[RMDB]
RNA sequence: GGGAACGACUCGAGUAGAGUCGAAAAAAGGAGUCAAGCUUAUCGCUAAUCUGCCUGAGUUUUCAUUAUCAAGCCGUGGCCCUAUGAAACCGUAUCUUGGUGCACGCACAAAGCUGACACGAAGUGACAACAACAGGUGCUUCGGCACCUGUUGUUGAAAAGAAACAACAACAACAAC
Reactivity to DMS in 0.01 (KOAc 150mM, MgCl2 10mM, bicine 150mM(pH8.5), 24C), signal-to-noise 1, nucleotides 027 to 126: a130a060g000g000a050g010u010c100a070a100g030c010u000u000a050u030c100g010c040u000a080a070u010c050u000g020c040c000u000g010a050g000u030u000u000u000c160a080u000u010a160u000c080a100a100g010c060c030g040u020g000g000c060c030c050u000a060u010g000a080a040a090c090c060g000u000a130u000c060u000u000g020g070u000g000c050a110c130g020c050a070c120a030a070a080g000c040u000g010a110c080a040c040g020a080a060g030u000g000a190